[RMDB]
An RNA of 177 nucleotides, treated with 2A3 and read out base by base. The reactions ran in a buffer of 150 mM KOAc, 10 mM MgCl2 and 150 mM bicine (pH 8.5), at 24 C. For 2A3, 520 sequencing reads were counted. As a SHAPE reagent, 2A3 marks flexible, mostly unpaired nucleotides at the ribose 2'-OH. Source: RMDB library OK1LIB, as collected in RNAgym.
RNA sequence: GGGAACGACUCGAGUAGAGUCGAAAAGACUACAUAGUAGCUAACGGCGGCGAUCGAGAGACCCUCGACAGUUUGCUGCAAUCGCAACUGCAGUUGCGCCCGCUCGCUCAUGCUCUCCAGAAUCUCGGGCUAAUAUCGCCUUCGGGCGAUAUUAGCCAAAAGAAACAACAACAACAAC
Reactivity to 2A3 in 0.01 (KOAc 150mM, MgCl2 10mM, bicine 150mM(pH8.5), 24C), signal-to-noise 2, nucleotides 027 to 126: g040a000c000u010a030c040a230u230a080g090u000a000g010c010u040a130a090c050g020g020c020g070g050c000g080a080u000c030g000a000g000a000g040a050c000c010c000u000c040g070a080c020a050g070u070u150u230g070c040u000g050c030a030a090u100c040g000c060a060a050c000u030g000c040a040g040u150u050g060c020g030c000c060c000g050c010u000c000g000c000u040c030a020u070g000c010u060c080u090c000c000a060g100a240a120u110c080u050c090g110